[RMDB]
Chemical mapping of a 207-nucleotide RNA with 2A3.
Reactivities are rounded to 0.1 and cut off at 0 and 3.
The RNA was probed in 150 mM KOAc, 10 mM MgCl2 and 150 mM bicine (pH 8.5) at 24 C.
The data come from the RNA Mapping Database (RMDB), library OK3TST.
RNA sequence: GGGAACGACUCGAGUAGAGUCGAAAAAGACCUUGAUUCUGUUGCUAAAAAGGUAGCUCAGACGAGCAACUCAACAAUUUCAAGCAUUCGUGAGAUUGUUACUGAACUUGCCAGUACGGGGAAAUAUACGCGAGAGCAGAUUCAGAACAUCACAAAAAAAUCGUACUGCAUUCGUGCAGUACGAUUUAAAAGAAACAACAACAACAAC
Reactivity to 2A3 in 0.01 (KOAc 150mM, MgCl2 10mM, bicine 150mM(pH8.5), 24C), signal-to-noise 1, nucleotides 027 to 156: a000g070a050c000c010u000u040g000a000u000u000c000u010g090u120u020g030c060u120a000a020a020a130a140g100g040u040a050g000c000u000c020a180g020a300c150g000a090g000c010a020a090c030u070c120a000a050c010a010a020u000u010u170c020a020a010g010c080a090u200u200c080g000u020g000a040g000a040u040u100g010u040u030a140c010u010g000a020a000c010u030u120g010c000c000a050g050u110a110c040g040g020g030g060a010a210a000u220a030u050a050c060g070c050g140a040g000a010g020c020a000g020a110u050u010c000a000g000a010a000c000a040u080c020a020c050a040a040a030a090